[RMDB]
RNA sequence: GGGAACGACUCGAGUAGAGUCGAAAAACAACAUGCCCAGGUAGCCCAGACCUUCAAGGCUACGGUGCGUUGCGACGCACGGGCUGAUUCUUCACAACGACGUUCACCGCGUCUUCUUCCAUCCCCCUCCAGCGCACGAAGUUCGCUUCGUGCGCAAGCGUAAUCAUCAGUUCGCUGAUGAUUACGCAAAAGAAACAACAACAACAAC
Reactivity to 2A3 in 0.01 (KOAc 150mM, MgCl2 10mM, bicine 150mM(pH8.5), 24C), signal-to-noise 2, nucleotides 027 to 156: a000c120a010a010c010a060u090g010c010c000c010a050g050g020u010a000g000c020c050c120a100g090a230c030c100u090u120c180a080a020g000g030c000u000a030c030g010g020u010g020c000g010u030u070g030c190g160a020c010g030c030a040c090g000g010g000c000u030g030a090u030u070c070u120u130c070a090c060a220a100c080g020a010c020g040u140u180c050a030c120c000g020c000g010u000c010u060u010c030u100u040c020c000a110u080c020c000c000c000c000u030c000c000a030g000c000g000c000a000c000g000a010a010g020u000u010c020g010c130u020u000c000g000u000g010c000g000c000a000a000

The record gives the reactivity of an RNA of 207 nucleotides to 2A3. The RNA was probed in 150 mM KOAc, 10 mM MgCl2 and 150 mM bicine (pH 8.5) at 24 C. The data come from the RNA Mapping Database (RMDB), library M2RFPK.